[RMDB]
RNA sequence: GGGAACGACUCGAGUAGAGUCGAAAACAGGACCAACCGUAACGAUCAACAAACCCUACUGCGCUUCUGUCGCGUGAUUCGAGAGGUAGACCAAGCUCAGCCCGAGUGACAUGUAGAGCACCAUGCUCAGCACGAUUUUUAUAACAACGAAGAAGAGCUAAACCAAUUAUUUCGAUAAUUGGUUUAGAAAAGAAACAACAACAACAAC
Reactivity to DMS in 0.01 (KOAc 150mM, MgCl2 10mM, bicine 150mM(pH8.5), 24C), signal-to-noise 4, nucleotides 027 to 156: c050a080g010g010a100c030c020a080a110c020c060g040u000a090a140c070g010a110u000c050a110a120c080a110a110a120c030c000c010u000a070c060u010g020c050g020c000u010u000c040u000g020u000c030g000c050g020u000g010a120u000u010c060g030a130g000a110g030g030u000a100g040a050c030c000a060a160g020c020u020c030a180g010c010c000c010g010a120g020u000g030a100c040a030u010g040u000a110g010a060g040c010a110c110c100a080u000g010c000u000c040a140g010c020a040c060g030a090u010u010u000u010u000a050u000a110a080c050a040a050c040g030a070a070g000a080a060g010a240g010
Reactivity to 2A3 in 0.01 (KOAc 150mM, MgCl2 10mM, bicine 150mM(pH8.5), 24C), signal-to-noise 6, nucleotides 027 to 156: c030a050g040g030a040c010c020a040a030c040c010g040u060a040a050c040g030a060u110c090a020a110c030a060a120a080c030c010c000u110a110c090u120g000c030g000c030u080u120c060u160g120u160c040g000c020g060u040g050a070u070u090c060g020a030g000a010g150g000u030a020g040a020c010c050a060a020g020c020u010c030a030g010c020c010c030g020a040g040u060g040a040c050a100u130g020u120a030g020a010g020c000a010c030c040a030u120g000c010u000c030a010g010c010a010c030g020a010u020u070u000u070u080a120u050a150a060c080a040a010c060g070a020a050g040a070a020g020a050g000
Overview:
Chemical mapping of a 207-nucleotide RNA with DMS and 2A3. It was measured as part of the RMDB library OK3TST.